RNA sequence: GGGAACGACUCGAGUAGAGUCGAAAAGAUCGUGGGUACCGCAUCCAAACAGUCCCGCAAGGUCGUGAGCGUCUCAUUCUCGGCGUGCCGAAAGGCCGUCAGUCUGCGCAGGGGGCUAUAGUCCUCGCGCUACGCCUCUGUUCGCAGAGGCGUAGCGAAAAGAAACAACAACAACAAC
Reactivity to 2A3 in 0.01 (KOAc 150mM, MgCl2 10mM, bicine 150mM(pH8.5), 24C), signal-to-noise 1, nucleotides 027 to 126: g090a050u070c030g060u090g000g020g050u070a070c060c000g100c030a060u000c070c060a020a120a070c030a050g060u050c040c030c050g050c090a050a050g080g000u030c020g050u040g060a030g070c020g090u010c000u000c040a070u080u030c030u000c090g020g000c040g090u220g000c020c020g020a040a010a030g000g010c030c000g000u000c000a000g020u000c000u030g030c010g000c120a060g000g000g000g000g000c000u140a140u070a300g010u020c000c000u000c030g000
Reactivity to DMS in 0.01 (KOAc 150mM, MgCl2 10mM, bicine 150mM(pH8.5), 24C), signal-to-noise 2, nucleotides 027 to 126: g020a060u010c160g010u000g000g000g020u000a050c050c010g010c030a080u000c050c090a050a050a140c100a070g000u010c010c020c030g040c060a070a100g050g010u000c050g020u010g000a100g000c030g020u000c030u010c070a180u000u010c030u000c120g020g020c010g020u000g030c000c010g000a060a050a220g010g010c020c010g020u000c010a040g030u000c020u000g000c060g050c050a110g010g030g010g010g000c040u010a060u000a080g000u010c020c020u000c020g030
This 177-nucleotide RNA was probed chemically with 2A3 and DMS. The DMS profile rests on 1,260 reads. In probing experiments dimethyl sulfate is read out at A N1 and C N3, which are open when not base-paired. Conditions: 150 mM KOAc, 10 mM MgCl2 and 150 mM bicine (pH 8.5), 24 C.